[RMDB]
RNA sequence: GGGAACGACUCGAGUAGAGUCGAAAAGAGCACGAUGAACAGCACGGCCGCGAUGCCGUGAACGAGCUUCGUCGGCAGCCGAUGCGCGAAGCGGUCGCCGAGCAGGAUCGCGGGCACGUUCGCGAGACCUGCCGAUAGGGUUCGCCCUAUCGGCAGGAAAAGAAACAACAACAACAAC
Reactivity to 2A3 in 0.01 (KOAc 150mM, MgCl2 10mM, bicine 150mM(pH8.5), 24C), signal-to-noise 3, nucleotides 027 to 126: g090a010g030c080a010c150g100a150u090g060a060a010c020a040g070c030a000c050g060g000c010c020g140c050g100a080u150g050c010c000g040u030g010a000a000c040g010a030g030c030u030u000c020g070u020c040g110g010c010a020g000c050c040g110a140u120g020c040g000c000g030a030a050g250c030g030g080u070c040g000c030c030g010a060g040c020a020g080g130a060u060c050g000c000g000g040g000c040a030c080g030u040u020c020g000c010g030a010g030a090
Reactivity to DMS in 0.01 (KOAc 150mM, MgCl2 10mM, bicine 150mM(pH8.5), 24C), signal-to-noise 4, nucleotides 027 to 126: g000a160g000c090a050c040g010a030u010g010a040a050c110a160g010c070a110c080g000g000c030c020g020c240g010a110u010g000c000c010g010u000g000a030a040c110g000a100g020c110u000u000c030g030u000c040g000g020c030a080g010c090c050g000a140u010g010c040g010c020g010a040a070g010c030g000g020u000c060g020c050c030g000a080g020c040a140g030g010a230u000c040g020c010g010g000g000c060a090c110g000u000u010c020g010c020g010a140g000a130
The record gives the reactivity of an RNA of 177 nucleotides to 2A3 and DMS.
The reactions ran in a buffer of 150 mM KOAc, 10 mM MgCl2 and 150 mM bicine (pH 8.5), at 24 C.
2A3 adducts were read by reverse transcription with SuperScript II with manganese.
The 2A3 profile rests on 4,040 reads.
For DMS the reverse transcriptase was MarathonRT.
Values cover nucleotides 27 to 126.